[RMDB]
RNA sequence: GGGAACGACUCGAGUAGAGUCGAAAAGAUAUGGAGAUGGACGACAUGGAGACAUUCGGAAACGAAUGUACUCCAACAGCGUCCCAUCUCCUAAGUCAAACUCUCGCUUGGUUCGCCAAGCGAGAGAGCAUACCCUUAUGUUCGCAUAAGGGUAUGCAAAAGAAACAACAACAACAAC
Reactivity to 2A3 in 0.01 (KOAc 150mM, MgCl2 10mM, bicine 150mM(pH8.5), 24C), signal-to-noise 4, nucleotides 027 to 126: g010a000u020a010u040g000g000a010g000a000u010g010g010a010c040g020a010c140a300u300g010g000a000g000a000c000a000u000u020c000g010g000a020a010a010c000g010a000a000u010g000u070a240c000u000c010c000a020a020c050a020g000c000g020u000c000c040c080a000u010c000u000c010c000u010a020a000g020u000c020a040a050a250c000u000c000u010c000g000c010u000u020g030g070u090u120c300g030c120c000a000a000g000c010g000a000g000a000g000a000
Reactivity to DMS in 0.01 (KOAc 150mM, MgCl2 10mM, bicine 150mM(pH8.5), 24C), signal-to-noise 4, nucleotides 027 to 126: g000a030u010a090u010g000g000a030g000a010u000g000g010a040c010g020a030c120a220u010g000g000a010g010a080c000a010u010u000c000g020g010a040a030a040c000g000a000a000u000g000u010a100c010u010c000c000a070a070c240a170g000c010g000u000c100c040c170a000u000c000u000c000c000u000a000a070g010u000c010a170a150a210c000u000c000u000c000g020c000u000u010g000g000u010u010c290g010c000c000a010a000g010c010g000a000g000a000g010a030

Source: RMDB library TTRDES, as collected in RNAgym.
Chemical mapping of a 177-nucleotide RNA with 2A3 and DMS.
The RNA was probed in 150 mM KOAc, 10 mM MgCl2 and 150 mM bicine (pH 8.5) at 24 C.
For DMS, 5,255 sequencing reads were counted.
For 2A3, 14,897 sequencing reads were counted.
For DMS the reverse transcriptase was MarathonRT.